[RMDB]
RNA sequence: GGGAACGACUCGAGUAGAGUCGAAAAGGUAGUGCGAGUCGUAUGACCGGCCUUUUGCGACGAGUCCAGAUGCUGUUUGGCCGGUAUUAGCAUCAGGACGAGGCUGCGAAGCAGUCGAGCACUACGAGGGAAGCUCGGUGUUCGCAUCGAGUUUCCCAAAAGAAACAACAACAACAAC
Reactivity to DMS in 0.01 (KOAc 150mM, MgCl2 10mM, bicine 150mM(pH8.5), 24C), signal-to-noise 8, nucleotides 027 to 126: g010g010u000a000g010u000g010c000g020a150g000u000c000g020u000a080u030g010a050c010c000g000g000c010c020u010u030u040u040g000c010g010a010c010g000a190g000u010c000c000a070g010a020u000g010c000u010g000u010u020u010g010g010c010c010g010g000u010a020u030u030a020g010c000a010u000c010a090g010g000a020c000g000a120g000g000c000u010g000c020g010a160a120g020c000a010g000u000c000g000a200g000c010a010c000u000a010c010g010a150
Reactivity to 2A3 in 0.01 (KOAc 150mM, MgCl2 10mM, bicine 150mM(pH8.5), 24C), signal-to-noise 7, nucleotides 027 to 126: g100g000u000a000g000u000g010c010g030a040g010u010c010g010u080a090u110g030a010c000c000g000g000c000c000u060u080u110u180g010c000g000a010c010g020a020g000u000c000c000a010g000a000u000g000c020u030g060u160u090u050g010g000c000c000g000g000u000a000u010u110a000g000c000a000u000c000a010g000g000a000c000g010a010g010g000c000u010g000c030g060a080a020g010c000a000g010u000c000g020a010g000c000a000c000u000a000c000g010a060

Structure probing data (DMS and 2A3) for a 177-nucleotide construct.
For 2A3, 36,563 sequencing reads were counted.
The reactions ran in a buffer of 150 mM KOAc, 10 mM MgCl2 and 150 mM bicine (pH 8.5), at 24 C.
Source: RMDB library OK1LIB, as collected in RNAgym.